The record gives the reactivity of an RNA of 177 nucleotides to 2A3 and DMS.
For 2A3 the reverse transcriptase was SuperScript II with manganese.
Source: RMDB libraries RFM100 and RFMREP, as collected in RNAgym.
Conditions: 150 mM KOAc, 10 mM MgCl2 and 150 mM bicine (pH 8.5), 24 C.
RNA sequence: GGGAACGACUCGAGUAGAGUCGAAAAGGCGUGUGGAGGGAACGUGGGGAAGUGAAACAUCUCAGUACCCACAGGAAGAGAAAACAACAUGUGAUUCCGUGAGUAGUGGCGAGCGAAAGCGGAAGAGCUUCAUUAGCAAUUUCGAUUGCUAAUGAAGAAAAGAAACAACAACAACAAC
Reactivity to 2A3 in 0.01 (KOAc 150mM, MgCl2 10mM, bicine 150mM(pH8.5), 24C), signal-to-noise 9, nucleotides 027 to 126: g050g010c100g000u090g030u070g030g090a100g040g010g020a060a020c050g010u020g000g020g010g010a030a040g160u070g090a090a100a050c100a240u080c020u000c030a010g020u030a030c010c010c000a010c010a010g050g020a080a030g070a010g030a050a060a030a020c090a040a010c030a110u160g060u070g100a130u040u000c000c000g010u010g010a000g000u010a000g000u020g070g130c170g030a010g000c000g000a010a000a000g010c000g000g000a000a000g000a000g000
Reactivity to DMS in 0.01 (KOAc 150mM, MgCl2 10mM, bicine 150mM(pH8.5), 24C), signal-to-noise 9, nucleotides 027 to 126: g010g010c060g020u010g020u010g000g000a090g010g010g010a110a070c160g020u000g000g010g000g000a130a170g010u010g000a070a110a110c220a090u010c030u010c030a050g010u000a200c010c010c010a020c030a110g000g020a080a070g010a110g000a050a040a060a050c150a080a080c150a100u030g010u010g000a210u000u000c000c000g000u000g000a050g000u000a110g000u010g000g030c250g000a250g000c010g000a080a110a300g000c010g000g000a010a000g000a090g000